[RMDB]
RNA sequence: GGGAACGACUCGAGUAGAGUCGAAAAACAGCCAGAUGUGGCGCGUAAGGAAUGAAUUCUUCCGAAAGAAUCAGUGGUAACAUUGUAGUAUGAGGAGGUUGGACUAGUGUUGCAUCGUCCGUCUUGAUCUAGACCGGAAAUUCGUUUCCGGUCUAGAAAAAGAAACAACAACAACAAC
Reactivity to 2A3 in 0.01 (KOAc 150mM, MgCl2 10mM, bicine 150mM(pH8.5), 24C), signal-to-noise 2, nucleotides 027 to 126: a000c060a030g170c060c020a010g030a010u030g000u040g030g000c000g000c040g070u070a080a050g040g050a040a140u100g010a030a070u110u000c000u010u020c010c000g050a060a110a000g030a010a010u060c030a020g020u010g030g010u090a100a000c000a010u010u000g060u060a030g010u000a010u070g030a030g000g000a000g040g000u050u000g060g000a010c020u020a020g050u000g030u070u000g040c020a030u040c020g050u050c040c040g030u000c010u020u020g030a030
Reactivity to DMS in 0.01 (KOAc 150mM, MgCl2 10mM, bicine 150mM(pH8.5), 24C), signal-to-noise 5, nucleotides 027 to 126: a080c090a160g000c010c030a090g020a100u000g020u000g010g010c020g000c080g010u010a150a080g000g000a100a080u040g010a110a110u010u030c040u010u010c030c030g000a150a080a070g010a110a110u010c010a050g020u010g000g000u030a110a130c050a020u010u010g020u000a030g010u010a060u020g000a250g000g010a040g010g010u000u000g000g010a090c030u010a100g000u020g010u000u000g000c070a040u010c020g000u010c040c060g010u000c020u000u000g000a280
Annotation
Source: RMDB libraries RFM100 and RFMREP, as collected in RNAgym. Structure probing data (2A3 and DMS) for a 177-nucleotide construct. The 2A3 profile rests on 1,465 reads.